RNA sequence: GGGAACGACUCGAGUAGAGUCGAAAAGAUAUGGAGGAUCGAACUUCUAUGAAGUACAUCACAGUAUGGUCGGAAACGACCAUAUCACAGUGUAUGGAGAAGUCGAUCCUCCUAAGUCAAAUCUAGGCAUGAUAGCUUCGGCUAUCAUGCCUAGAAAUCAACUUUGCUAGUUCGCUAGCAAAGUUGAAAAAGAAACAACAACAACAAC
Reactivity to DMS in 0.01 (KOAc 150mM, MgCl2 10mM, bicine 150mM(pH8.5), 24C), signal-to-noise 2, nucleotides 027 to 156: g000a040u000a020u000g000g020a030g050g020a020u000c010g050a100a070c000u010u000c020u000a300u000g010a120a300g010u000a000c000a010u000c010a050c080a160g010u000a000u000g000g030u000c000g030g020a020a050a070c000g020a030c000c000a010u000a010u000c020a060c100a150g030u010g000u000a030u000g010g010a000g010a000a010g010u000c000g000a020u000c010c000u000c000c000u000a000a040g000u040c010a100a160a190u010c010u000a010g030g000c020a010u000g010a020u010a010g010c000u000u000c300g060g030c000u000a010u000c010a000u000g010c010c000u000a000g000a020a050a110
Reactivity to 2A3 in 0.01 (KOAc 150mM, MgCl2 10mM, bicine 150mM(pH8.5), 24C), signal-to-noise 2, nucleotides 027 to 156: g000a000u010a000u020g010g000a000g000g010a030u010c020g020a140a190c040u020u000c040u040a300u080g000a000a000g010u010a000c000a010u040c040a040c010a080g000u010a000u000g010g000u000c010g010g000a000a000a000c010g000a000c040c000a000u000a000u010c010a020c040a000g000u000g010u000a010u020g000g000a010g000a000a000g010u010c010g000a000u000c000c000u000c000c000u000a000a000g000u000c000a030a000a010u020c000u000a010g000g000c030a010u000g000a000u000a000g000c020u050u050c300g050g000c000u020a000u010c000a000u000g000c000c000u000a000g000a000a000a000

About this RNA: Chemical mapping of a 207-nucleotide RNA with DMS and 2A3. For DMS the reverse transcriptase was MarathonRT. 2A3 is a SHAPE reagent: it acylates the 2'-hydroxyl of flexible nucleotides of all four kinds. The DMS profile rests on 3,771 reads.